[RMDB]
Notes:
Conditions: 150 mM KOAc, 10 mM MgCl2 and 150 mM bicine (pH 8.5), 24 C. Chemical mapping of a 207-nucleotide RNA with DMS and 2A3. As a SHAPE reagent, 2A3 marks flexible, mostly unpaired nucleotides at the ribose 2'-OH. For DMS the reverse transcriptase was MarathonRT. For 2A3 the reverse transcriptase was SuperScript II with manganese. For DMS, 1,637 sequencing reads were counted.

RNA sequence: GGGAACGACUCGAGUAGAGUCGAAAAGAAAGAGAGUUAGACGCGGUUGAUCUCACCCUUCGGGGGGGCUAUAGAGAUCACUGGAAGCACUACCGGACAACCGGAACAUUGCAGCAAUGCAGCCCAAAAAAUCCAAACAUCUUCGGAUGUUUGGAAACAGAUAUUGGAUGUUCGCAUCCAAUAUCUGAAAAGAAACAACAACAACAAC
Reactivity to DMS in 0.01 (KOAc 150mM, MgCl2 10mM, bicine 150mM(pH8.5), 24C), signal-to-noise 1, nucleotides 027 to 156: g070a090a100a020g000a160g020a060g000u020u000a020g020a060c060g010c030g000g070u010u020g030a080u000c020u000c020a300c050c010c000u020u020c180g110g020g010g070g010g010g020c110u020a050u010a110g000a070g060a060u000c020a070c050u020g020g020a090a020g000c040a090c050u020a180c040c020g040g000a100c250a100a160c020c010g050g010a150a090c070a130u010u010g020c040a050g030c050a110a130u010g020c040a050g050c020c010c000a000a030a030a060a080a150u010c010c020a030a020a020c000a010u000c000u000u020c300g040g020a020u020g040u000u000u000g000g000a010a000a130
Reactivity to 2A3 in 0.01 (KOAc 150mM, MgCl2 10mM, bicine 150mM(pH8.5), 24C), signal-to-noise 2, nucleotides 027 to 156: g080a020a100a000g080a000g010a000g020u070u040a070g020a060c050g020c040g130g000u080u160g030a010u010c000u000c000a040c010c010c030u060u120c270g030g000g000g000g000g000g030c030u080a080u050a180g000a010g000a010u000c000a000c030u030g040g060a070a040g000c050a020c080u060a050c010c000g040g000a060c040a150a240c020c000g020g010a070a010c030a020u090u120g000c010a000g010c030a010a050u070g000c010a020g020c000c010c030a050a090a020a010a000a040u000c010c000a000a000a000c000a000u000c000u040u040c160g100g000a000u000g000u000u000u000g000g000a000a000a000